[RMDB]
RNA sequence: GGGAACGACUCGAGUAGAGUCGAAAAUUAAAUGGUAGCAACGGUUCCAAAGGAGCCGAAGUUCAAAGCUAAAGCAUCGAUCUAAAAUGCUACCAAAAAGGUAAGGAGCUUGGCAAUGAACAAAAAAGACUGAUAACUAGUUCGCUAGUUAUCAGUCAAAAGAAACAACAACAACAAC
Reactivity to 2A3 in 0.01 (KOAc 150mM, MgCl2 10mM, bicine 150mM(pH8.5), 24C), signal-to-noise 1, nucleotides 027 to 126: u140u070a040a040a030u040g010g010u010a000g040c010a020a100c010g000g000u020u020c020c050a300a240a220g000g000a010g020c000c000g000a010a020g000u020u030c000a020a000a000g000c010u090a190a010a000g000c010a040u030c070g120a060u010c060u150a000a090a060a090u100g000c000u010a000c010c000a000a000a050a020a000g080g000u030a080a030g050g020a010g020c040u060u030g020g010c010a000a070u020g000a040a000c000a020a120a060a000a000a030
Reactivity to DMS in 0.01 (KOAc 150mM, MgCl2 10mM, bicine 150mM(pH8.5), 24C), signal-to-noise 1, nucleotides 027 to 126: u010u040a080a110a040u000g000g010u000a000g010c000a150a260c020g010g010u000u000c000c030a080a140a070g000g000a030g000c020c010g020a030a040g000u010u000c010a000a030a300g000c000u020a030a010a060g010c000a060u000c070g000a030u000c060u000a090a000a050a070u020g000c030u000a000c000c020a000a020a050a290a130g020g020u000a060a270g030g010a060g030c060u000u000g010g020c060a020a230u000g010a020a000c010a000a110a060a050a120a150